[RMDB]
RNA sequence: GGGAACGACUCGAGUAGAGUCGAAAAUCCCGGGGACGGGUCGUAACCCGCUCGUCCCCGCCUUUACACCUUCCGGAAGGAGUUCAGCCCCCCUCCGUCGGAAGGUCUAGGCGGGCGGUGGAGUCCCCGGGGAGAGAUUGUUCGCAAUCUCUCCCCGAAAAGAAACAACAACAACAAC
Reactivity to DMS in 0.01 (KOAc 150mM, MgCl2 10mM, bicine 150mM(pH8.5), 24C), signal-to-noise 3, nucleotides 027 to 126: u010c020c000c000g030g030g020g010a300c020g010g020g030u030c090g020u020a150a130c070c000c010g000c060u020c020g010u010c070c030c000c010g010c000c000u000u030u030a070c300a030c000c000u000u000c000c000g010g000a120a130g000g000a010g010u010u030c250a120g010c000c000c000c020c190c000u000c000c000g000u000c000g000g010a000a000g010g000u000c020u000a000g010g030c010g020g000g020c070g000g000u000g000g020a120g000u030c020c020c000
Reactivity to 2A3 in 0.01 (KOAc 150mM, MgCl2 10mM, bicine 150mM(pH8.5), 24C), signal-to-noise 2, nucleotides 027 to 126: u010c000c000c000g000g010g000g010a030c010g000g000g040u090c060g020u090a090a170c000c000c000g050c010u030c000g120u150c010c000c010c000g010c000c000u030u020u020a050c040a020c000c000u010u020c000c000g040g000a210a180g090g000a090g020u160u230c110a100g030c000c000c000c000c000c000u000c010c000g040u030c000g010g000a000a000g000g000u000c010u000a000g000g000c000g000g000g000c100g010g040u060g060g020a060g040u030c000c010c000

Description
The record gives the reactivity of an RNA of 177 nucleotides to DMS and 2A3. Conditions: 150 mM KOAc, 10 mM MgCl2 and 150 mM bicine (pH 8.5), 24 C.